[RMDB]
RNA sequence: GGGAACGACUCGAGUAGAGUCGAAAAUCAGCGGCGAAGAGGUCCCGAUCGACGAGACAUUCAGCAACGGCCUGGAAUGGCCGGGAGGUCUCGGCGCGGACGCCGACGAGGUCGCCAACUGCCAAUGCUCGGUCAUCAUCACCAACUAGCGCCCGGGGUACAUGAGGAUUUUCGAAUCCUCAUGUACAAAAGAAACAACAACAACAAC
Reactivity to 2A3 in 0.01 (KOAc 150mM, MgCl2 10mM, bicine 150mM(pH8.5), 24C), signal-to-noise 3, nucleotides 027 to 156: u080c020a010g040c040g040g000c030g020a090a060g100a050g080g020u070c040c020c010g020a140u080c070g020a010c000g000a000g010a030c020a050u120u140c070a060g050c040a140a080c000g020g000c000c000u070g020g160a160a070u130g030g000c000c000g010g000g000a030g020g020u000c000u000c000g010g000c020g000c020g030g020a030c080g030c050c000g010a020c030g000a030g040g000u030c030g000c020c010a010a040c030u050g040c040c000a060a080u050g020c020u010c020g040g080u030c030a050u040c000a030u050c010a070c050c010a070a060c030u040a040g060c010g020c030c010c010g070g010g040
Reactivity to DMS in 0.01 (KOAc 150mM, MgCl2 10mM, bicine 150mM(pH8.5), 24C), signal-to-noise 1, nucleotides 027 to 156: u010c050a110g040c060g030g000c020g080a110a120g000a190g020g030u010c020c030c020g000a110u000c000g030a040c000g000a060g020a050c020a070u010u000c080a150g000c040a300a190c020g120g030c000c010u000g100g080a160a110u010g000g030c020c010g030g000g040a090g000g020u010c000u000c020g000g000c000g100c010g000g030a090c080g010c050c000g000a090c000g000a130g050g000u010c030g020c010c060a090a120c030u010g000c010c050a130a130u000g020c020u000c040g040g010u030c030a060u000c020a120u010c020a090c050c030a030a130c080u000a100g020c030g020c020c000c020g090g010g000
Structure probing data (2A3 and DMS) for a 207-nucleotide construct.
The 2A3 profile rests on 2,191 reads.
The reactions ran in a buffer of 150 mM KOAc, 10 mM MgCl2 and 150 mM bicine (pH 8.5), at 24 C.